Structure probing data (2A3 and DMS) for a 177-nucleotide construct. It was measured as part of the RMDB library M2PK90. Conditions: 150 mM KOAc, 10 mM MgCl2 and 150 mM bicine (pH 8.5), 24 C. Values are in units of 0.01, from 0 to 300, in steps of 10. For DMS, 1,000 sequencing reads were counted. The 2A3 profile rests on 1,524 reads.
RNA sequence: GGGAACGACUCGAGUAGAGUCGAAAAACUCUGAGCGUAAUCGCGUCUUGACAAGACUAUAGGUGACGUGAGUAUCUAUCCCAUUGUGCAUAGCGAUGGGAUAAUACGCUGAUCUAUAGUCACGGAACCUAGCGGAUUCAUUCGUGAAUCCGCUAGGAAAAGAAACAACAACAACAAC
Reactivity to 2A3 in 0.01 (KOAc 150mM, MgCl2 10mM, bicine 150mM(pH8.5), 24C), signal-to-noise 2, nucleotides 027 to 126: a010c060u060c060u090g040a020g020c000g090u120a030a120u060c000g000c020g040u000c030u120u180g080a030c040a170a100g000a010c010u000a010u000a000g080g000u080g070a000c030g050u000g010a020g050u020a020u050c090u020a000u020c010c000c000a010u000u060g020u090g050c140a170u270a230g020c000g020a000u000g020g020g010a000u000a000a000u000a000c000g020c010u040g020a030u000c000u000a000u000a010g000u000c000a010c050g020g060a050a010
Reactivity to DMS in 0.01 (KOAc 150mM, MgCl2 10mM, bicine 150mM(pH8.5), 24C), signal-to-noise 2, nucleotides 027 to 126: a100c070u000c070u020g000a030g020c030g000u010a090a120u000c050g010c110g010u000c000u020u020g000a160c170a080a110g000a000c000u020a010u000a010g010g000u000g040a110c090g010u000g000a080g010u000a000u000c170u000a000u000c000c000c000a000u000u000g010u000g020c300a090u000a070g000c000g010a000u000g010g000g000a000u010a000a000u000a020c000g000c000u000g000a030u000c000u000a000u000a000g000u000c010a120c300g000g000a070a130